[RMDB]
RNA sequence: GGGAACGACUCGAGUAGAGUCGAAAAAGCAGGACCGCGUUACGACGCGGUCCUGCAGCAAUGAGUAGAAGCGGUCAACUUUGGUGUCGAGUUCCAACAAACCAAAUUCGGGCAUUGCUCACUGCAAAAAACUCUCUUUAGUUCGCUAAAGAGAGAACAGUAUGUAUAUGUUCGCAUAUACAUACUGAAAAGAAACAACAACAACAAC
Reactivity to DMS in 0.01 (KOAc 150mM, MgCl2 10mM, bicine 150mM(pH8.5), 24C), signal-to-noise 2, nucleotides 027 to 156: a090g010c000a040g050g000a060c020c020g090c000g040u000u010a130c180g040a220c030g080c010g050g020u000c010c000u000g010c000a000g030c020a010a040u000g000a030g010u000a090g000a110a060g020c060g020g040u000c080a060a080c060u000u000u010g010g020u000g010u020c020g010a150g010u000u010c080c030a080a180c130a070a110a040c020c000a020a000a110u010u000c070g020g000g010c040a110u000u000g010c020u000c010a050c060u000g010c020a000a040a060a050a030a110c000u000c010u010c000u000u000u000a020g000u000u000c300g030c010u010a000a020a040g030a020g010a020g020a000a080
Reactivity to 2A3 in 0.01 (KOAc 150mM, MgCl2 10mM, bicine 150mM(pH8.5), 24C), signal-to-noise 3, nucleotides 027 to 156: a010g000c010a000g000g000a000c000c010g060c060g030u040u070a130c300g040a010c020g040c000g020g000u000c000c010u010g000c000a000g000c000a000a020u010g000a000g000u040a010g030a130a010g060c050g040g070u060c030a040a070c080u030u030u020g010g040u060g080u120c100g070a090g100u160u070c070c020a050a070c030a070a160a030c000c010a020a020a030u080u100c050g050g000g000c030a050u020u110g010c000u010c010a010c020u010g000c000a000a010a020a030a060a130c000u000c000u000c000u000u000u010a000g020u020u050c140g020c120u000a000a000a000g000a000g000a000g000a000a000

Source: RMDB library M2RFPK, as collected in RNAgym. An RNA of 207 nucleotides, treated with DMS and 2A3 and read out base by base. For DMS the reverse transcriptase was MarathonRT. The RNA was probed in 150 mM KOAc, 10 mM MgCl2 and 150 mM bicine (pH 8.5) at 24 C.